[RMDB]
RNA sequence: GGGAACGACUCGAGUAGAGUCGAAAAGGCAAGCGCUUCGGCGCUUGCCAGAUUCGGCGGUGACGCCGAAUCAACAGUUCGGUGACGAACUGAACUUGGCCACGUGAGUGGCCAAGACCGCCUCUACGGAGGCGGAACCUGAUACUACGGUAUCAGGAAGUAUCCGUUCGCGGAUACAGCGUGCUUCUACGGAAGCACGCAUGCGCUUGCCUAUUUAGGCAUACUUCUCAGGAUGGCGCGUUGCAGUCCAACAAGAUCCAGGGACUAGCAGUUACUUCGGUAACUGCAAAAGAAACAACAACAACAAC
Reactivity to 2A3 in 0.01 (KOAc 150mM, MgCl2 10mM, bicine 150mM(pH8.5), 24C), signal-to-noise 2, nucleotides 027 to 266: g020g000c000a000a010g010c040g020c260u300u300c300g050g010c000g020c020u020u010g000c000c000a000g000a000u000u000c000g000g000c000g030g040u070g050a020c000g010c020c010g010a000a000u000c000a010a050c000a000g010u010u000c020g030g090u130g080a080c020g000a000a000c000u000g010a020a030c000u000u000g000g000c010c020a000c020g100u130g160a130g030u010g010g000c000c000a000a000g000a000c000c000g000c030c010u000c030u030a070c210g120g000a000g010g010c000g010g000a000a030c010c000u010g000a000u000a000c010u010a020c270g140g000u000a000u000c010a000g000g010a020a030g000u000a000u000c010c000g010u030u050c300g110c030g080g000a000u010a000c020a000g020c000g000u000g020c010u020u000c010u030a090c260g170g010a000a000g000c000a000c000g000c000a010u090g020c010g000c000u060u060g000c000c000u120a210u250u300u270a020g000g000c000a000u000a010c010u010u020c030u000c000a000g020g000a030u010g010g000c010g010c020g050u020u040g040c040a060g130u070c080c000a050a040c030a090a050g040a130u000c000c010a010g010g010g010a000c000u030a010
Chemical mapping of a 307-nucleotide RNA with 2A3. 2A3 adducts were read by reverse transcription with SuperScript II with manganese. 2A3 is a SHAPE reagent: it acylates the 2'-hydroxyl of flexible nucleotides of all four kinds.